RNA sequence: GGGAACGACUCGAGUAGAGUCGAAAAGAUAUGGAACCUCGUCGAGCACGAAUAGGUCGGAAACGACCUACGUGCCCAGACAGCGAGGGUUCCUAAGUCAUUAGAUGACUUCUUCGGAAGUCAUCAACCCACUUCUCCAGUUCGCUGGAGAAGUGGGAAAAGAAACAACAACAACAAC
Reactivity to DMS in 0.01 (KOAc 150mM, MgCl2 10mM, bicine 150mM(pH8.5), 24C), signal-to-noise 1, nucleotides 027 to 126: g000a020u000a300u020g000g000a000a030c020c000u000c090g020u000c000g020a020g010c000a040c000g020a030a150u020a000g000g030u010c000g010g030a170a030a200c030g000a000c000c000u000a020c010g000u000g000c000c190c010a140g020a040c300a180g010c160g050a090g020g000g010u010u000c030c010u000a010a170g000u020c000a070u000u000a080g000a000u000g000a010c000u000u000c000u020u020c160g000g000a000a010g010u000c000a010u000c010a070a160
Reactivity to 2A3 in 0.01 (KOAc 150mM, MgCl2 10mM, bicine 150mM(pH8.5), 24C), signal-to-noise 1, nucleotides 027 to 126: g020a010u080a020u110g000g000a000a010c000c010u030c030g060u030c040g010a020g040c010a020c020g000a270a270u040a000g000g000u010c010g010g050a040a010a080c010g020a000c000c010u010a000c010g010u010g010c000c010c000a020g050a030c050a010g050c020g030a030g120g130g000u020u000c000c000u000a100a010g030u010c030a090u110u300a030g030a010u020g000a000c000u020u010c020u000u080c220g120g000a010a010g010u000c000a010u000c010a000a010
This 177-nucleotide RNA was probed chemically with DMS and 2A3. 2A3 adducts were read by reverse transcription with SuperScript II with manganese. The RNA was probed in 150 mM KOAc, 10 mM MgCl2 and 150 mM bicine (pH 8.5) at 24 C. For DMS, 784 sequencing reads were counted.